This 177-nucleotide RNA was probed chemically with 2A3 and DMS. The RNA was probed in 150 mM KOAc, 10 mM MgCl2 and 150 mM bicine (pH 8.5) at 24 C.
RNA sequence: GGGAACGACUCGAGUAGAGUCGAAAAAGUUUUCAGACAAUGCAGGGAUAACACCAGCAAUAUCAUUGGACCUAAUGACUGAUGCUGAGCUGGCCAGAGCUGUAUCAUACAUGCCAACAUCUGCAGGUGAAAUGCUGGUAUUCGUACCAGCAUUUCAAAAAGAAACAACAACAACAAC
Reactivity to 2A3 in 0.01 (KOAc 150mM, MgCl2 10mM, bicine 150mM(pH8.5), 24C), signal-to-noise 1, nucleotides 027 to 126: a000g040u040u020u030u050c050a000g010a030c070a100a000u030g030c010a020g000g030g040a040u090a220a070c020a020c080c000a000g000c000a000a050u020a010u140c040a030u010u020g030g030a040c000c070u170a180a080u240g070a040c010u030g010a010u000g050c030u050g030a000g020c010u060g000g000c030c060a050g040a050g030c030u030g020u050a100u120c000a020u080a070c020a000u230g010c020c020a060a010c030a080u030c020u000g000c030a040g060g020
Reactivity to DMS in 0.01 (KOAc 150mM, MgCl2 10mM, bicine 150mM(pH8.5), 24C), signal-to-noise 3, nucleotides 027 to 126: a120g030u000u020u000u000c060a130g010a140c160a100a100u000g010c030a050g000g000g000a070u020a090a090c170a100c020c010a020g020c020a060a080u020a100u000c010a030u010u010g000g010a120c130c140u000a100a080u020g000a060c040u000g010a080u000g020c070u000g030a170g000c010u000g010g020c030c070a090g000a070g000c020u000g000u000a060u000c150a120u000a070c050a000u010g040c010c040a100a060c150a030u000c020u000g030c030a020g000g020